[RMDB]
RNA sequence: GGGAACGACUCGAGUAGAGUCGAAAAUGAUUGGCGCAGGGGUACGGACCUCAGCUGAAUCAUGGGAGCUGAAUGUAUGUGUGUCUCUGCCCUCCUGCAUGUGGCAGGUUGAUGGGGAGCACUUACAGAUUAGUCAGACGUUCGCGUCUGACUAAUCAAAAGAAACAACAACAACAAC
Reactivity to DMS in 0.01 (KOAc 150mM, MgCl2 10mM, bicine 150mM(pH8.5), 24C), signal-to-noise 2, nucleotides 027 to 126: u010g010a080u000u000g000g010c040g020c220a120g000g020g000g030u010a150c300g000g000a110c090c020u000c040a070g000c000u020g000a060a020u010c050a010u010g040g010g000a180g030c170u010g000a040a190u000g000u000a020u010g030u010g020u000g000u000c020u000c000u010g010c210c000c000u000c010c000u020g000c030a220u000g010u020g010g010c010a010g000g000u000u000g000a050u010g000g000g000g000a280g000c020a010c010u000u000a010c050a120
Reactivity to 2A3 in 0.01 (KOAc 150mM, MgCl2 10mM, bicine 150mM(pH8.5), 24C), signal-to-noise 1, nucleotides 027 to 126: u040g010a010u020u010g030g000c090g010c130a060g020g030g000g050u080a050c080g080g240a040c070c000u000c000a020g000c000u020g060a050a030u010c010a010u010g000g030g060a070g030c090u050g100a140a060u060g050u000a020u020g100u010g010u000g300u030c000u030c030u030g030c000c020c010u000c010c010u000g050c060a050u250g070u160g300g040c010a020g000g000u010u020g020a040u010g000g000g000g000a020g010c030a000c000u010u020a000c000a020
This 177-nucleotide RNA was probed chemically with DMS and 2A3. For DMS, 1,022 sequencing reads were counted. For 2A3, 939 sequencing reads were counted. Conditions: 150 mM KOAc, 10 mM MgCl2 and 150 mM bicine (pH 8.5), 24 C. Reactivities are given for positions 27 through 126.